Annotation:
An RNA of 177 nucleotides, treated with 2A3 and read out base by base. Conditions: 150 mM KOAc, 10 mM MgCl2 and 150 mM bicine (pH 8.5), 24 C. For 2A3, 878 sequencing reads were counted.
[RMDB]
RNA sequence: GGGAACGACUCGAGUAGAGUCGAAAACGUGUCUCGUUCGCGAGACACGAAAGGGAAAUGGACUGAGCGGCGCCGACCGCCAAACAACCGGCAAUAUAAAUAAAACCAUAAACUUCGGUUUAUGGAACCUUUGGUUCAUCUUCGGAUGAACCAAAGGAAAAGAAACAACAACAACAAC
Reactivity to 2A3 in 0.01 (KOAc 150mM, MgCl2 10mM, bicine 150mM(pH8.5), 24C), signal-to-noise 1, nucleotides 027 to 126: c010g000u010g000u000c010u000c000g020u020u050c170g020c020g070a000g010a000c010a000c010g010a060a000a000g080g010g020a030a070a050u100g040g060a050c070u100g000a010g060c000g040g010c030g030c040c020g180a300c000c000g010c000c000a070a000a000c020a030a020c020c000g030g030c040a060a020u200a010u070a170a210a000u210a020a110a050a080c000c000a000u000a010a010a010c020u030u040c230g120g000u020u030u000a000u010g000g030a000a010

Values are in units of 0.01, from 0 to 300, in steps of 10. Source: RMDB library M2PK50, as collected in RNAgym.